Chemical mapping of a 207-nucleotide RNA with 2A3. The 2A3 profile rests on 1,345 reads. The reactions ran in a buffer of 150 mM KOAc, 10 mM MgCl2 and 150 mM bicine (pH 8.5), at 24 C.
RNA sequence: GGGAACGACUCGAGUAGAGUCGAAAAGCAACUUAGGAUUUUAGGCUCCCCGUGCGUGUCUCGAACCAGGCCGGGCCAAACCCACGGGGGCUGGCGGUCCCCGUGCGGUCAAAAUCAAACCGCUGGAAAAACAGUUCUAGCUUCGGCUAGAACUGAAGACUCAUGUAGUGUUCGCACUACAUGAGUCAAAAGAAACAACAACAACAAC
Reactivity to 2A3 in 0.01 (KOAc 150mM, MgCl2 10mM, bicine 150mM(pH8.5), 24C), signal-to-noise 2, nucleotides 027 to 156: g020c020a000a140c040u120u160a140g070g070a170u140u130u100u130a060g010g000c050u110c000c010c020c040g050u140g030c030g040u060g070u040c090u050c110g090a060a040c050c030a040g010g010c020c020g000g000g040c020c020a060a050a030c000c010c000a000c010g000g000g020g000g000c000u010g010g000c010g000g000u000c000c010c000c010g000u000g000c060g000g000u040c000a020a020a010a230u080c010a030a090a120c000c000g020c030u020g050g010a130a120a010a000a000c000a010g000u000u010c000u000a000g000c010u050u040c140g030g020c000u000a000g000a010a000c000u010g000a000a010
2A3 adducts were read by reverse transcription with SuperScript II with manganese.